The record gives the reactivity of an RNA of 207 nucleotides to DMS and 2A3. For DMS, 2,437 sequencing reads were counted. For DMS the reverse transcriptase was MarathonRT. It was measured as part of the RMDB library OK3TST.
[RMDB]
RNA sequence: GGGAACGACUCGAGUAGAGUCGAAAACUCAAUCAUUUAGAAAGUUUAUUUUGCCAAGGUUAAGGACGUGCACCUGGGAGGCAAGUUUGUGCCUUUCUCCAAUGAUGAUUUUGAAGGCUUCAAUAUUUAAAGGGAGAAUAUUGGGGAAAGAGGAAGAGAUUCAGAGAUCAUUCGUGAUCUCUGAAUCAAAAGAAACAACAACAACAAC
Reactivity to DMS in 0.01 (KOAc 150mM, MgCl2 10mM, bicine 150mM(pH8.5), 24C), signal-to-noise 1, nucleotides 027 to 156: c050u000c040a050a060u010c030a060u000u010u000a130g010a070a090a110g020u000u000u000a110u010u010u010u000g030c030c030a140a090g000g010u000u000a100a120g000g020a070c060g020u000g030c100a100c030c010u000g010g020g000a100g000g000c010a040a070g010u010u000u000g010u000g000c060c010u020u000u000c010u000c020c020a080a150u000g020a010u000g010a080u000u000u000u000g000a040a060g050g020c060u030u000c010a020a030u000a020u010u000u000a090a050a090g010g030g010a150g040a090a020u000a020u000u000g000g000g000g000a030a070a060g000a140g020g020a040a070g010a190
Reactivity to 2A3 in 0.01 (KOAc 150mM, MgCl2 10mM, bicine 150mM(pH8.5), 24C), signal-to-noise 5, nucleotides 027 to 156: c010u010c010a020a080u040c030a040u090u180u230a080g040a090a160a050g030u070u090u130a100u040u180u090u060g030c010c020a050a030g030g010u100u100a070a040g070g040a070c060g020u110g030c060a030c030c010u020g000g030g050a060g030g000c010a010a030g030u060u100u080g060u060g040c000c000u010u020u000c010u000c030c030a010a020u030g010a020u020g020a040u060u100u100u270g110a060a050g050g000c000u040u040c050a060a020u030a120u100u150u240a140a070a010g040g010g000a070g020a030a040u070a010u030u010g010g020g000g000a010a070a010g060a050g040g040a050a030g050a000